[RMDB]
RNA sequence: GGGAACGACUCGAGUAGAGUCGAAAAUAAUGCAUCGGCUAAUGCUAAUCGGCAUGCGCAUGCAUAUUAGCUAUACGGCAUUAAUAUAUAUUACGGCGCGCAUAUGCCGAUUAAUGCCGGCUACGUACAUAUCCGUAUAGUUCGCUAUACGGAUAUGAAAAGAAACAACAACAACAAC
Reactivity to 2A3 in 0.01 (KOAc 150mM, MgCl2 10mM, bicine 150mM(pH8.5), 24C), signal-to-noise 9, nucleotides 027 to 126: u110a010a060u100g020c020a080u110c060g060g010c040u090a140a040u170g050c020u030a090a080u090c040g010g000c000a010u020g000c010g000c020a020u100g000c010a000u020a050u060u060a020g000c010u070a050u070a300c110g030g000c010a010u070u110a070a010u040a000u040a010u010a050u110u220a080c090g040g010c030g000c020g000c080a030u070a070u300g000c000c000g000a000u000u010a000a000u020g000c010c010g000g000c010u050a030c050g030u030a040
Reactivity to DMS in 0.01 (KOAc 150mM, MgCl2 10mM, bicine 150mM(pH8.5), 24C), signal-to-noise 9, nucleotides 027 to 126: u010a080a070u000g010c030a060u010c060g010g010c020u000a150a080u010g010c130u000a050a050u010c090g010g020c000a020u000g010c060g020c050a070u000g020c070a030u000a020u000u000a050g000c030u000a140u010a140c170g000g000c010a070u010u000a020a030u000a070u000a100u010a120u010u010a230c130g000g010c040g020c080g010c130a070u000a080u000g010c010c010g010a030u000u000a010a070u000g010c010c020g010g020c080u000a050c220g010u010a140
The record gives the reactivity of an RNA of 177 nucleotides to 2A3 and DMS.
The RNA was probed in 150 mM KOAc, 10 mM MgCl2 and 150 mM bicine (pH 8.5) at 24 C.
2A3 is a SHAPE reagent: it acylates the 2'-hydroxyl of flexible nucleotides of all four kinds.
It was measured as part of the RMDB library OK2TRN.
For 2A3 the reverse transcriptase was SuperScript II with manganese.